This 207-nucleotide RNA was probed chemically with 2A3.
For 2A3, 649 sequencing reads were counted.
Values cover nucleotides 27 to 156.
The reactions ran in a buffer of 150 mM KOAc, 10 mM MgCl2 and 150 mM bicine (pH 8.5), at 24 C.
[RMDB]
RNA sequence: GGGAACGACUCGAGUAGAGUCGAAAAAGCUAGUUCGCUAGCUACAACACCUUUGUGUUAGUGUAAGUAGGCAAGGCUCCAGGACCCAUUGGGUCCGGGAGGAGCUGAUGACCCUACGAAAGCUAACACUCUGGUAUACAUGCUGCUUCGGCAGCAAGCCGAUGGUCAUAUUCGUAUGACCAUCGGCAAAAGAAACAACAACAACAAC
Reactivity to 2A3 in 0.01 (KOAc 150mM, MgCl2 10mM, bicine 150mM(pH8.5), 24C), signal-to-noise 1, nucleotides 027 to 156: a000g000c000u000a010g000u150u090c210g000c110u000a020g070c000u050a020c060a120a050c060a010c010c000u030u000u000g000u000g000u000u010a030g000u000g010u150a030a020g010u000a000g030g030c100a180a120g030g000c000u000c000c000a030g000g000a000c040c020c050a170u270u300g000g000g000u010c000c000g020g000g020a150g010g010a000g000c000u010g000a000u040g010a000c000c000c000u000a000c000g010a050a020a000g000c000u000a000a000c000a000c010u000c000u000g000g010u000a000u060a030c100a040u090g030c000u060g000c010u070u070c070g100g000c000a050g070c010a020a000